[RMDB]
The record gives the reactivity of an RNA of 177 nucleotides to 2A3 and DMS. Reactivities are rounded to 0.1 and cut off at 0 and 3. The data come from the RNA Mapping Database (RMDB), library OK2TST. Conditions: 150 mM KOAc, 10 mM MgCl2 and 150 mM bicine (pH 8.5), 24 C. For DMS, 1,705 sequencing reads were counted.
RNA sequence: GGGAACGACUCGAGUAGAGUCGAAAAACACCAAGCGGAAGUUGUUUUCCGUGAUACGGAGAGCGCUAGAAUGUGUCAAUCUUCAAGUGCAGACUACUCAAUCACAGAUGCGUCAAUCAACACCUCACGCUAUUGUUAGGUUCGCCUAACAAUAGCGAAAAGAAACAACAACAACAAC
Reactivity to 2A3 in 0.01 (KOAc 150mM, MgCl2 10mM, bicine 150mM(pH8.5), 24C), signal-to-noise 2, nucleotides 027 to 126: a020c100a050c010c000a010a010g030c020g060g020a030a020g030u070u050g040u090u200u000u020c000c000g010u030g040a050u080a110c060g010g010a040g000a010g060c030g000c030u040a030g090a180a120u140g010u030g070u170c060a040a190u030c020u060u030c060a110a020g030u000g050c050a020g040a080c030u050a050c010u000c060a060a050u060c010a050c000a100g080a000u130g030c030g040u050c030a020a090u060c010a000a080c030a030c050c030u050c000a070
Reactivity to DMS in 0.01 (KOAc 150mM, MgCl2 10mM, bicine 150mM(pH8.5), 24C), signal-to-noise 3, nucleotides 027 to 126: a080c130a170c050c040a110a190g000c050g000g000a050a140g010u000u000g010u000u010u000u000c020c010g030u010g020a120u000a120c160g000g000a050g010a080g020c050g030c020u000a150g030a040a090u020g000u000g000u000c140a080a090u000c050u010u000c050a070a030g020u000g000c020a070g000a090c080u000a070c050u010c070a030a030u010c060a040c090a080g000a090u000g000c080g020u000c080a100a110u000c040a090a010c070a050c040c030u000c130a200